An RNA of 207 nucleotides, treated with DMS and 2A3 and read out base by base. The reactions ran in a buffer of 150 mM KOAc, 10 mM MgCl2 and 150 mM bicine (pH 8.5), at 24 C. The DMS profile rests on 5,049 reads.
RNA sequence: GGGAACGACUCGAGUAGAGUCGAAAAGCGGCCUUCACGAUUGCACCGCCUGGCUGUCGAUCAGGGCCAGCACGUCAGCGAAGCGGACCCAAUCGCCUGCACCGUCCAGAUAGAUCCCCUCGCUGUAAGACUUGGAGUAGCGCGGCAAAUGCCCCAGCUUACAUUUCUUGUUCGCAAGAAAUGUAAGAAAAGAAACAACAACAACAAC
Reactivity to DMS in 0.01 (KOAc 150mM, MgCl2 10mM, bicine 150mM(pH8.5), 24C), signal-to-noise 2, nucleotides 027 to 156: g020c030g030g020c020c020u000u000c060a140c060g000a100u010u010g020c120a200c040c030g020c030c040u000g000g040c030u000g000u030c050g000a080u000c100a100g020g020g000c000c020a080g030c010a110c050g020u020c030a070g040c020g030a090a090g000c090g040g000a090c010c020c020a050a120u000c010g030c020c000u000g020c070a180c040c010g010u000c030c030a300g010a130u000a060g010a080u000c000c020c000c020u000c040g020c000u000g000u000a080a090g000a050c060u010u000g020g000a130g010u010a100g030c070g000c070g020g000c040a060a050a090u010g000c010c000c010c010a090g010
Reactivity to 2A3 in 0.01 (KOAc 150mM, MgCl2 10mM, bicine 150mM(pH8.5), 24C), signal-to-noise 3, nucleotides 027 to 156: g020c010g010g020c010c040u060u070c080a050c060g060a090u040u110g010c060a040c040c060g100c050c020u040g060g000c020u010g060u150c040g030a140u070c080a100g010g050g000c030c040a020g020c030a010c050g090u060c030a010g010c020g040a090a010g010c040g020g040a090c000c040c000a000a050u030c020g020c020c040u050g010c050a060c050c050g040u030c040c010a030g020a110u130a060g110a110u130c000c010c000c000u020c000g020c000u040g030u070a050a030g020a070c020u030u070g030g030a040g020u080a010g030c100g000c040g120g000c020a050a030a060u120g030c000c000c000c010a010g020